[RMDB]
RNA sequence: GGGAACGACUCGAGUAGAGUCGAAAACUUGGGCACUUCGGUGCCCAAGAAACGCUCAACCUCAGAGCGCAAAAGUCGAACGAAUACAGUUCGUCAUGAGGAAAACGGACCCGUUCGCGGGUCCGAAGCUGAACGAUAAGUUCGCUUAUCGUUCAGCAAAAGAAACAACAACAACAAC
Reactivity to DMS in 0.01 (KOAc 150mM, MgCl2 10mM, bicine 150mM(pH8.5), 24C), signal-to-noise 1, nucleotides 027 to 126: c000u000u000g000g000g020c000a000c000u000u000c300g030g020u000g010c000c000c000a000a010g000a130a100a260c030g030c000u030c000a120a060c060c000u000c000a010g000a010g030c040g000c160a140a070a030a000g080u000c000g000a010a000c000g040a240a160u010a120c190a160g000u000u000c000g000u010c000a020u000g000a000g000g010a060a070a120a140c010g010g000a000c000c020c000g030u000u010c270g030c020g020g000g040u000c000c030g000a000a040
Reactivity to 2A3 in 0.01 (KOAc 150mM, MgCl2 10mM, bicine 150mM(pH8.5), 24C), signal-to-noise 2, nucleotides 027 to 126: c000u010u010g020g000g030c010a010c010u050u050c270g100g000u010g000c010c000c000a000a000g000a000a000a000c010g000c010u000c020a070a030c000c000u000c010a000g010a010g000c010g010c080a300a110a030a030g000u000c000g000a010a010c010g030a120a090u300a210c080a100g010u020u010c020g020u010c010a010u000g000a000g000g020a040a070a000a000c010g000g000a010c020c030c000g030u050u070c270g000c020g120g000g000u000c000c000g000a000a020